This 177-nucleotide RNA was probed chemically with DMS and 2A3. Source: RMDB libraries RFM100 and RFMREP, as collected in RNAgym. The RNA was probed in 150 mM KOAc, 10 mM MgCl2 and 150 mM bicine (pH 8.5) at 24 C. Reactivities are given for positions 27 through 126. For 2A3 the reverse transcriptase was SuperScript II with manganese.

RNA sequence: GGGAACGACUCGAGUAGAGUCGAAAAGAUCCUAACCCCCGUUUCGUCUUGUACGAAUCACUCUUGAACGAACUUAAAAUUGCAUCAUACGUCACGGUAGGUUUCGUCUUGCUGUGCGUACGUUGCAAUAGAAUGUCUAGUUCGCUAGACAUUCUAUAAAAGAAACAACAACAACAAC
Reactivity to DMS in 0.01 (KOAc 150mM, MgCl2 10mM, bicine 150mM(pH8.5), 24C), signal-to-noise 9, nucleotides 027 to 126: g010a130u010c010c010u030a100a300c030c000c010c010c020g010u010u010u000c010g010u000c030u020u010g030u030a020c010g010a030a040u000c060a100c160u010c080u000u010g010a100a090c110g000a070a130c140u020u010a060a050a110a060u010u000g010c010a010u000c010a040u000a010c000g000u030c010a010c010g000g010u000a010g010g010u000u030u020c140g000u020c000u000u000g000c010u000g010u000g000c010g010u000a000c080g000u000u000g000c010a010
Reactivity to 2A3 in 0.01 (KOAc 150mM, MgCl2 10mM, bicine 150mM(pH8.5), 24C), signal-to-noise 9, nucleotides 027 to 126: g060a100u050c000c000u030a100a130c000c000c000c010c010g010u010u020u010c020g010u010c050u100u240g050u120a020c020g020a030a030u060c030a060c080u120c040u050u130g080a130a050c060g030a070a040c040u120u140a100a090a110a150u070u020g000c000a000u000c000a010u010a020c020g060u070c300a000c010g000g000u010a010g020g030u100u300u230c150g080u070c020u010u010g000c000u000g000u000g000c000g000u000a000c010g000u000u000g000c000a000